[RMDB]
Structure probing data (DMS) for a 177-nucleotide construct. Source: RMDB library OK2TST, as collected in RNAgym. For DMS, 806 sequencing reads were counted. DMS adducts were read by reverse transcription with MarathonRT. DMS (dimethyl sulfate) methylates the pairing face of unpaired adenines and cytosines. The RNA was probed in 150 mM KOAc, 10 mM MgCl2 and 150 mM bicine (pH 8.5) at 24 C.

RNA sequence: GGGAACGACUCGAGUAGAGUCGAAAAAGUACAUCAAUUAGGGCUUAAGGAUAAGCCGGGGCGUAAUAGUGCUGUGGUGGAAUAUCCUGUUCGUGAGUUAUUUGGUUUUGACAAGGAAUCUAUACAACUAGCUAUCCCUCUUCGGAGGGAUAGCUAGAAAAGAAACAACAACAACAAC
Reactivity to DMS in 0.01 (KOAc 150mM, MgCl2 10mM, bicine 150mM(pH8.5), 24C), signal-to-noise 1, nucleotides 027 to 126: a080g020u020a150c080a080u000c020a020a070u000u000a100g000g010g000c010u000u010a110a130g000g020a140u010a050a100g030c010c000g000g020g020g030c000g040u000a060a080u000a160g050u000g010c010u010g020u000g020g000u020g010g000a080a080u010a070u010c050c000u000g010u010u010c090g010u000g010a100g030u000u010a050u000u000u000g000g040u000u030u010u000g020a130c130a120a110g010g000a040a000u000c040u010a050u000a050c160a050a070